RNA sequence: GGGAACGACUCGAGUAGAGUCGAAAAGACUACCGCACUGUCAAGACCAGGGACUGCAGGGAAAUAGAAUGCAUGCCUCCGCGCCACUACAAUCACUACUUCAUUGAUUGCGGCAUGCAACCAGCCGGAGGCUGUUCAGCUUCGGCUGAACAGCCUCAAAAGAAACAACAACAACAAC
Reactivity to 2A3 in 0.01 (KOAc 150mM, MgCl2 10mM, bicine 150mM(pH8.5), 24C), signal-to-noise 3, nucleotides 027 to 126: g020a000c050u040a060c060c010g060c000a040c030u050g040u120c050a050a020g020a100c000c010a000g030g000g030a050c050u050g000c030a040g070g020g150a050a090a030u170a080g140a080a030u060g010c020a010u020g000c000c010u060c060c000g010c040g000c020c020a060c020u100a030c010a010a030u020c020a030c110u160a060c020u180u050c040a180u040u090g070a080u010u070g030c020g000g000c020a030u060g000c010a020a010c010c010a000g060c010c020g060
Reactivity to DMS in 0.01 (KOAc 150mM, MgCl2 10mM, bicine 150mM(pH8.5), 24C), signal-to-noise 2, nucleotides 027 to 126: g000a120c120u020a080c050c010g060c170a130c060u020g000u020c040a010a100g000a120c000c030a060g060g000g000a070c070u000g010c030a110g000g010g000a060a020a040u050a040g000a080a100u000g010c000a040u000g000c070c000u000c080c000g010c120g060c010c010a100c070u020a240c000a000a000u020c000a080c160u000a210c130u040u000c130a020u010u000g000a050u010u010g000c130g000g010c010a000u010g020c050a060a150c060c030a060g010c020c130g000
Structure probing data (2A3 and DMS) for a 177-nucleotide construct. For DMS the reverse transcriptase was MarathonRT. The RNA was probed in 150 mM KOAc, 10 mM MgCl2 and 150 mM bicine (pH 8.5) at 24 C. The 2A3 profile rests on 2,122 reads.